[RMDB]
This 177-nucleotide RNA was probed chemically with 2A3 and DMS. Reactivities are given for positions 27 through 126. For 2A3 the reverse transcriptase was SuperScript II with manganese. It was measured as part of the RMDB library RFM100.
RNA sequence: GGGAACGACUCGAGUAGAGUCGAAAAAGUCCGUAUACGUACGGACAUCCUUACAAGAUCAGGCGGCUUUUAGUGCGGCCGGGCCUCUUUUGAGGCAGUGGGAUUUCAAGACUCGCGGGACUUAGAAUUUUGCGAUUCUAUUCGUAGAAUCGCAAAAAAAAGAAACAACAACAACAAC
Reactivity to 2A3 in 0.01 (KOAc 150mM, MgCl2 10mM, bicine 150mM(pH8.5), 24C), signal-to-noise 4, nucleotides 027 to 126: a000g000u000c000c000g000u020a050u000a010c300g010u020a010c000g030g020a000c000a010u020c000c000u110u120a130c040a130a020g030a100u130c080a060g050g000c020g030g000c040u100u090u120u300a120g040u250g230c070g040g010c000c000g000g010g000c030c000u090c000u020u300u120u300g010a020g000g030c010a010g070u100g000g060g030a080u080u090u150c080a070a000g030a040c010u000c010g030c020g030g000g000a010c000u010u040a000g010a040a060
Reactivity to DMS in 0.01 (KOAc 150mM, MgCl2 10mM, bicine 150mM(pH8.5), 24C), signal-to-noise 2, nucleotides 027 to 126: a070g030u000c010c020g000u000a030u020a070c200g010u030a010c020g020g010a000c000a060u010c020c010u020u020a120c190a120a100g010a120u010c050a080g000g000c000g000g010c020u000u010u000u040a050g020u000g000c060g010g020c040c010g000g020g000c020c000u010c000u000u010u000u010g000a000g000g030c010a000g020u010g010g010g000a120u020u000u040c070a050a180g010a060c020u010c000g030c070g020g010g000a110c030u000u000a130g000a160a100
For 2A3, 1,369 sequencing reads were counted.